[RMDB]
Structure probing data (2A3) for a 207-nucleotide construct. The RNA was probed in 150 mM KOAc, 10 mM MgCl2 and 150 mM bicine (pH 8.5) at 24 C. It was measured as part of the RMDB library OK3TST.

RNA sequence: GGGAACGACUCGAGUAGAGUCGAAAAAAUUGCUGAUAAGGAAGAAGAACUUUCAAAACUAAAAGACGAGAGUUCAAAUGAUGAUGAUGAUCCAUCUAAUAUUGAAGCAAACCGUAACAAUAAUCCUGAAAACAGAAGUAAAAAAACUCCGAACGCAGGUAGCUAAUAGUUUCGACUAUUAGCUACCAAAAGAAACAACAACAACAAC
Reactivity to 2A3 in 0.01 (KOAc 150mM, MgCl2 10mM, bicine 150mM(pH8.5), 24C), signal-to-noise 1, nucleotides 027 to 156: a000a000u140u080g010c000u040g000a010u040a120a010g070g010a010a060g040a140a010g000a010a010c000u000u010u020c090a170a220a140a140c110u260a230a170a080a040g050a010c110g000a000g000a010g000u000u000c100a070a050a020u040g050a000u060g000a010u000g010a010u040g010a050u020c080c000a000u020c000u010a000a000u100a110u210u080g040a090a000g000c000a000a000a110c020c070g040u100a050a080c000a020a060u130a080a040u070c030c060u100g020a060a160a000a000c050a010g120a170a000g080u120a010a100a030a090a090a030a030c050u120c120c010g000a000a000c040g000c090a030